[RMDB]
RNA sequence: GGGAACGACUCGAGUAGAGUCGAAAAGAUCAAGAUGAGUGGAUUAAGGCGGCAAAUACGGUAUUAAAUGAGCGCCUAAAUGCUUCUACGCCUAAAUUGAAUCAUACUGAACUAUUUGAUGCCAUUUACAAAACAAUUGCGCCGCCUGUUGUGGUGCCUUAGGUAAGACGUUCGCGUCUUACCUAAGAAAAGAAACAACAACAACAAC
Reactivity to 2A3 in 0.01 (KOAc 150mM, MgCl2 10mM, bicine 150mM(pH8.5), 24C), signal-to-noise 4, nucleotides 027 to 156: g030a030u060c050a030a030g040a080u090g040a020g040u070g060g050a030u120u120a090a030g020g020c000g030g020c000a000a070a040u120a100c090g040g000u050a030u040u090a050a020a070u080g100a030g050c040g030c000c020u070a090a070a010u090g000c000u080u020c030u060a030c070g110c040c020u060a070a130a100u100u080g030a050a030u050c020a020u080a140c050u060g040a080a030c040u090a070u050u010u070g030a020u060g010c000c010a060u080u130u130a100c080a040a130a100a010c030a100a130u180u110g010c060g000c010c010g000c030c010u020g000u030u020g010u010g030g030u020g020c010
Reactivity to DMS in 0.01 (KOAc 150mM, MgCl2 10mM, bicine 150mM(pH8.5), 24C), signal-to-noise 1, nucleotides 027 to 156: g000a070u000c040a030a120g000a040u000g000a100g030u000g020g000a240u000u000a090a070g000g020c000g020g000c040a060a100a060u000a040c030g030g060u010a070u000u000a000a070a050u000g000a070g000c050g000c020c120u010a030a050a070u010g030c200u000u000c000u010a000c000g000c040c020u000a020a110a170u010u010g030a060a170u000c040a080u000a140c080u010g000a110a060c060u020a110u000u000u000g000a030u010g000c000c000a100u000u000u000a190c030a020a040a020a060c080a070a200u000u000g010c070g050c010c000g000c020c030u000g000u000u000g000u000g020g010u020g040c040
The record gives the reactivity of an RNA of 207 nucleotides to 2A3 and DMS. For DMS the reverse transcriptase was MarathonRT. 2A3 adducts were read by reverse transcription with SuperScript II with manganese. Conditions: 150 mM KOAc, 10 mM MgCl2 and 150 mM bicine (pH 8.5), 24 C. The DMS profile rests on 2,423 reads.